Conditions: 150 mM KOAc, 10 mM MgCl2 and 150 mM bicine (pH 8.5), 24 C. Chemical mapping of a 177-nucleotide RNA with DMS. The DMS profile rests on 1,245 reads. For DMS the reverse transcriptase was MarathonRT.

[RMDB]
RNA sequence: GGGAACGACUCGAGUAGAGUCGAAAAAGAAAGAGGUUCUCAUUGCAGGUGAGGAAGUCCUUGAUCCUGUCGUCGUGGUGCACAUCCUGGUACUGGGCCAGUUUCUCCCCCACGUCCUGGAACGAGGUCCGAUAGUGGGAUUCGUCCCACUAUCGGAAAAAGAAACAACAACAACAAC
Reactivity to DMS in 0.01 (KOAc 150mM, MgCl2 10mM, bicine 150mM(pH8.5), 24C), signal-to-noise 1, nucleotides 027 to 126: a130g010a060a110a090g030a050g000g000u020u000c020u000c020a090u010u000g010c170a050g020g000u000g000a060g030g010a070a080g000u010c030c010u010u000g000a120u010c030c020u000g000u000c130g000u010c040g010u000g000g000u000g010c130a030c170a150u010c090c020u010g000g000u000a070c160u010g000g000g020c030c030a030g020u000u000u000c070u010c080c030c020c000c020a080c110g000u000c010c030u000g020g000a060a030c060g010a080g000g010